This 177-nucleotide RNA was probed chemically with DMS and 2A3. DMS adducts were read by reverse transcription with MarathonRT. High DMS reactivity at an A or C suggests that its Watson-Crick edge is free.

[RMDB]
RNA sequence: GGGAACGACUCGAGUAGAGUCGAAAAAAGGAAAUAGCUUCUGGACAAGCCAUUAUACCCCAUACUGUCUGAGCUCUAGAAGGUGCCACCUGGUUGGUGAUUGCACUGGAAAUAGAUGUCAAAGCUGAUUCGAUACACAAUUCGUUGUGUAUCGAAUAAAAGAAACAACAACAACAAC
Reactivity to DMS in 0.01 (KOAc 150mM, MgCl2 10mM, bicine 150mM(pH8.5), 24C), signal-to-noise 6, nucleotides 027 to 126: a090a050g010g010a090a060a060u010a040g020c010u000u010c080u000g010g000a090c090a060a050g010c040c030a030u000u000a090u010a170c060c000c000c090a150u010a140c080u000g010u000c030u000g010a300g000c050u010c010u010a040g000a160a180g010g000u000g010c010c010a010c010c000u000g000g020u020u000g020g030u000g000a130u010u000g010c020a020c020u010g000g000a090a100a130u000a020g010a040u000g010u010c020a040a160a050g010c070u010g010
Reactivity to 2A3 in 0.01 (KOAc 150mM, MgCl2 10mM, bicine 150mM(pH8.5), 24C), signal-to-noise 4, nucleotides 027 to 126: a000a000g090g010a030a090a020u060a030g000c010u050u040c060u130g100g010a060c030a060a010g010c000c000a030u100u090a070u110a140c000c000c020c010a030u070a090c040u040g060u060c010u030g040a020g040c020u000c000u010a050g000a060a020g010g000u000g010c010c000a010c010c010u140g300g030u230u170g000g000u030g010a080u010u150g000c000a000c000u000g000g030a020a070a020u060a010g030a040u080g070u060c030a050a030a020g000c020u030g040
Overview
The RNA was probed in 150 mM KOAc, 10 mM MgCl2 and 150 mM bicine (pH 8.5) at 24 C.